RNA sequence: GGGAACGACUCGAGUAGAGUCGAAAAAAGAUAUGGAUCCUCCUACCCACCGAUUUAGUACAGCGUUGAUCUAAGCUCGGAAACGAGCUUAGGGAGCUGGACCGAUCGAGGGAGGAUCCUAAGUCAACAAGACCUACAUGUUCGCAUGUAGGUCUUGAAAAGAAACAACAACAACAAC
Reactivity to DMS in 0.01 (KOAc 150mM, MgCl2 10mM, bicine 150mM(pH8.5), 24C), signal-to-noise 3, nucleotides 027 to 126: a130a090g010a130u000a190u000g020g000a000u000c000c010u000c020c000u010a150c010c010c020a300c130c000g010a020u010u000u000a040g040u000a090c000a010g020c010g010u000u010g000a020u000c000u010a000a020g000c010u000c000g000g000a090a130a230c010g040a030g020c000u000u010a000g000g000g000a040g000c000u000g020g000a020c090c180g000a010u010c010g000a130g010g000g000a000g000g000a000u000c000c000u000a000a060g030u020c110a150a190